[RMDB]
RNA sequence: GGGAACGACUCGAGUAGAGUCGAAAAACAGAUUCGCAUUGCAUGCCGUAAGUGUAAUUUAGCUUUCCGGUUAACCACCUCAAAGCUACGCGCUAAUGAUAAUAUCUUAUCAGUUAGAUUCACUGCUUCUAUACGAGUGGUUCGCCACUCGUAUAGAAAAAGAAACAACAACAACAAC
Reactivity to DMS in 0.01 (KOAc 150mM, MgCl2 10mM, bicine 150mM(pH8.5), 24C), signal-to-noise 1, nucleotides 027 to 126: a090c060a100g010a090u000u000c070g030c070a050u010u000g020c080a220u000g020c010c090g010u000a090a110g030u010g000u000a090a060u000u030u030a020g030c030u010u000u010c050c090g000g020u000u030a050a110c220c130a220c040c010u000c170a020a040a010g030c010u010a060c260g010c180g030c010u000a050a030u010g040a010u000a000a000u010a150u000c150u000u000a050u010c000a060g010u010u000a070g000a180u000u000c060a050c030u000g000c230u000
Reactivity to 2A3 in 0.01 (KOAc 150mM, MgCl2 10mM, bicine 150mM(pH8.5), 24C), signal-to-noise 2, nucleotides 027 to 126: a000c050a010g100a130u170u140c040g000c040a020u040u150g010c030a000u060g060c040c080g050u120a090a080g010u010g010u110a090a170u060u060u110a000g000c000u010u030u010c010c000g000g000u000u060a040a010c010c010a020c030c000u040c040a030a030a000g000c000u000a030c080g030c010g000c040u040a050a000u070g040a010u010a040a070u090a120u060c070u070u040a050u050c010a030g050u050u000a040g000a080u070u090c010a010c070u020g000c010u040